About this RNA
An RNA of 177 nucleotides, treated with 2A3 and DMS and read out base by base. For DMS the reverse transcriptase was MarathonRT. It was measured as part of the RMDB library OK2TST. The RNA was probed in 150 mM KOAc, 10 mM MgCl2 and 150 mM bicine (pH 8.5) at 24 C.

[RMDB]
RNA sequence: GGGAACGACUCGAGUAGAGUCGAAAAGUGUCGGUGACAUAGACGUUGCCGGAGUUGUCGACGGCCACCCCGUCGGGGUCGUUGAGGCCGGUGAACGGCAGCACGGUCUGGGUCUUGGAUCCGGCCGGUUAAACUCAUGCUUCGGCAUGAGUUUAACAAAAGAAACAACAACAACAAC
Reactivity to 2A3 in 0.01 (KOAc 150mM, MgCl2 10mM, bicine 150mM(pH8.5), 24C), signal-to-noise 1, nucleotides 027 to 126: g210u170g010u000c040g010g000u030g030a010c000a000u270a140g010a050c300g300u040u060g000c030c010g010g030a120g010u040u060g060u010c000g010a060c000g000g000c030c010a060c020c050c000c000g050u150c120g000g000g000g000u140c130g050u050u160g060a030g090g050c010c000g030g000u100g140a120a000c000g000g000c000a000g000c010a000c000g020g000u090c210u300g140g000g030u030c000u050u070g050g000a010u000c000c000g060g020c000c000g000
Reactivity to DMS in 0.01 (KOAc 150mM, MgCl2 10mM, bicine 150mM(pH8.5), 24C), signal-to-noise 1, nucleotides 027 to 126: g040u010g020u000c000g020g010u000g000a300c040a000u020a050g010a020c040g000u010u000g020c020c000g000g010a090g020u000u000g050u010c010g030a130c000g020g000c000c030a300c060c000c020c170g000u000c170g050g000g000g000u000c120g000u000u000g010a090g020g020c020c000g000g010u010g010a060a130c020g000g020c000a030g000c040a120c020g000g030u000c130u010g020g000g010u000c000u020u000g010g000a140u010c000c000g020g000c000c000g000